[RMDB]
RNA sequence: GGGAACGACUCGAGUAGAGUCGAAAACGAUGGCCAAGUUCUUCCUACUGAUGCUGAGAAGCCAGUUAUUGUCGAUCAAAGUGGUAAACCACUUCCUACUGAUGCAUCUGGAAACUACAUUGAUAACCAAAAGACGACGAUUCGUCGUCGUCUUUUGAAAAGAAACAACAACAACAAC
Reactivity to 2A3 in 0.01 (KOAc 150mM, MgCl2 10mM, bicine 150mM(pH8.5), 24C), signal-to-noise 3, nucleotides 027 to 126: c010g000a030u050g070g010c020c030a060a020g010u020u030c000u040u040c020c020u020a110c000u050g040a050u050g030c020u040g030a030g000a100a000g030c020c000a000g000u030u080a120u110u100g100u030c060g030a050u060c100a080a040a040g030u030g000g040u140a180a110a140c000c010a000c000u020u030c030c010u120a130c030u040g010a050u050g000c000a030u000c020u030g020g060a100a020a010c070u120a030c020a090u070u140g040a070u110a140a060c050
Reactivity to DMS in 0.01 (KOAc 150mM, MgCl2 10mM, bicine 150mM(pH8.5), 24C), signal-to-noise 5, nucleotides 027 to 126: c090g020a060u000g000g010c040c060a050a120g010u010u000c110u010u010c040c030u010a110c080u000g000a090u010g010c020u010g010a170g010a140a140g000c070c040a030g000u010u010a120u010u000g000u010c100g010a070u010c080a050a040a060g020u000g000g000u020a080a120a240c010c020a040c030u000u010c040c050u000a110c120u000g000a100u000g000c070a020u010c040u000g010g000a100a040a070c060u010a050c080a070u000u010g000a070u010a080a130c200
Notes: Structure probing data (2A3 and DMS) for a 177-nucleotide construct. The DMS profile rests on 3,877 reads. The RNA was probed in 150 mM KOAc, 10 mM MgCl2 and 150 mM bicine (pH 8.5) at 24 C. Source: RMDB library OK2TRN, as collected in RNAgym.